RNA sequence: GGGAACGACUCGAGUAGAGUCGAAAAUUGAACGGAUUCGUCCGUUCAACGCGUGCGAUCCAAACGUAGUACAAAAGUACAGUCGAAAGCACAAGGAUCAAAUGAUACAGCCGUUCGCGGCUGUAAAGGGCUAUUAAACUUUCGAGUUUAAUAGCCCAAAAGAAACAACAACAACAAC
Reactivity to 2A3 in 0.01 (KOAc 150mM, MgCl2 10mM, bicine 150mM(pH8.5), 24C), signal-to-noise 1, nucleotides 027 to 126: u020u000g000a020a020c010g000g010a000u100u030c110g080u030c060c000g000u010u000c000a010a000c040g030c030g060u000g010c030g030a000u020c000c000a080a070a000c110g030u110a040g020u030a030c020a020a300a030a040g020u020a020c010a040g030u020c030g110a150a060a050g060c040a020c050a100a070g030g000a020u070c060a010a070a070u160g030a030u010a020c000a000g000c000c030g040u040u080c180g010c050g120g020c000u000g000u020a010a000a000
Reactivity to DMS in 0.01 (KOAc 150mM, MgCl2 10mM, bicine 150mM(pH8.5), 24C), signal-to-noise 2, nucleotides 027 to 126: u000u000g000a000a000c000g020g000a020u000u030c280g030u010c000c000g000u000u000c000a010a040c150g010c230g040u010g000c060g010a130u000c000c020a050a130a030c030g000u020a100g010u000a050c020a080a080a070a120g000u000a010c000a110g000u000c080g000a100a070a270g030c050a020c040a040a110g000g000a070u000c060a040a090a080u000g020a300u000a020c000a000g010c010c010g010u000u010c230g000c040g000g010c010u010g000u010a010a060a150

An RNA of 177 nucleotides, treated with 2A3 and DMS and read out base by base. For DMS the reverse transcriptase was MarathonRT. The 2A3 profile rests on 1,053 reads. Values cover nucleotides 27 to 126. It was measured as part of the RMDB library M2PK50. 2A3 is a SHAPE reagent: it acylates the 2'-hydroxyl of flexible nucleotides of all four kinds.